[RMDB]
RNA sequence: GGGAACGACUCGAGUAGAGUCGAAAAGAAAGAAAUUGUUUGCGAGAGUGACGGUCGCUUUGUCGCUUGAGUGUCGGUGAAAAGCGAAAACACUACACUCGACAUGUGACAACAUGUGGCAGACGAAGGGAUAAGUAUACUUCGGUAUACUUAUCCCAAAAGAAACAACAACAACAAC
Reactivity to DMS in 0.01 (KOAc 150mM, MgCl2 10mM, bicine 150mM(pH8.5), 24C), signal-to-noise 5, nucleotides 027 to 126: g020a100a100a070g010a080a100a090u000u010g000u000u010u010g000c140g030a100g030a110g000u010g000a160c160g000g000u020c000g010c030u010u010u010g000u000c000g000c050u010u010g010a130g020u010g020u020c080g020g020u010g000a070a070a030a090g010c110g000a090a050a100a150c100a050c040u020a090c010a060c000u010c000g000a090c110a040u020g010u010g010a090c280a080a050c210a010u010g000u020g000g000c000a030g000a020c020g020a040a130
Reactivity to 2A3 in 0.01 (KOAc 150mM, MgCl2 10mM, bicine 150mM(pH8.5), 24C), signal-to-noise 6, nucleotides 027 to 126: g130a030a080a000g110a020a080a040u140u070g030u040u020u060g010c040g030a100g000a010g100u040g050a080c110g090g000u010c020g010c000u040u040u030g120u020c000g010c010u090u120g030a050g080u090g050u110c100g010g000u030g030a110a070a020a030g090c050g060a060a010a050a030c080a010c010u050a010c010a000c010u010c010g030a030c020a070u080g020u050g060a040c020a040a000c020a050u130g010u050g120g000c010a000g010a050c020g010a070a070
Structure probing data (DMS and 2A3) for a 177-nucleotide construct. The data come from the RNA Mapping Database (RMDB), library OK1LIB. The RNA was probed in 150 mM KOAc, 10 mM MgCl2 and 150 mM bicine (pH 8.5) at 24 C. For DMS the reverse transcriptase was MarathonRT.